[RMDB]
Record summary:
Structure probing data (2A3 and DMS) for a 177-nucleotide construct. The RNA was probed in 150 mM KOAc, 10 mM MgCl2 and 150 mM bicine (pH 8.5) at 24 C. For DMS, 77,249 sequencing reads were counted. For 2A3 the reverse transcriptase was SuperScript II with manganese. For 2A3, 107,070 sequencing reads were counted. It was measured as part of the RMDB library OK1LIB.

RNA sequence: GGGAACGACUCGAGUAGAGUCGAAAAUGGUUCGGUUACGUACAUGAUAAACAUGUAUCACUGGGCGUGUCCACCUAGUGCCUGUGGGCCAGUCUAUAGAACGGGCUGAACGCUGGGGCCAUGGGCCACAUCCGACGCGGUUCGCUGCGUUGGAUGUAAAAGAAACAACAACAACAAC
Reactivity to 2A3 in 0.01 (KOAc 150mM, MgCl2 10mM, bicine 150mM(pH8.5), 24C), signal-to-noise 9, nucleotides 027 to 126: u110g030g010u020u020c020g010g030u030u060a040c030g000u010a000c000a000u010g020a090u100a070a160a030c020a020u030g010u020a010u040c010a010c040u020g000g010g000c000g010u040g030u000c000c000a030c010c020u030a020g020u030g110c000c000u000g000u010g000g010g010c000c000a000g000u000c020u050a110u040a100g090a110a020c040g010g050g000c010u020g020a060a010c040g000c040u030g000g010g050g040c000c010a030u040g020g000g000c010c000
Reactivity to DMS in 0.01 (KOAc 150mM, MgCl2 10mM, bicine 150mM(pH8.5), 24C), signal-to-noise 9, nucleotides 027 to 126: u020g010g020u000u000c020g010g010u000u010a060c300g000u010a010c000a010u000g000a170u060a120a130a190c040a020u000g010u000a010u010c140a040c040u000g000g000g000c000g010u020g000u000c030c040a120c120c070u010a060g010u030g010c000c000u000g020u000g000g010g000c010c000a020g000u000c050u010a150u040a090g020a090a090c110g010g000g000c020u000g000a090a130c300g000c010u010g000g000g000g010c010c010a020u000g000g000g010c020c080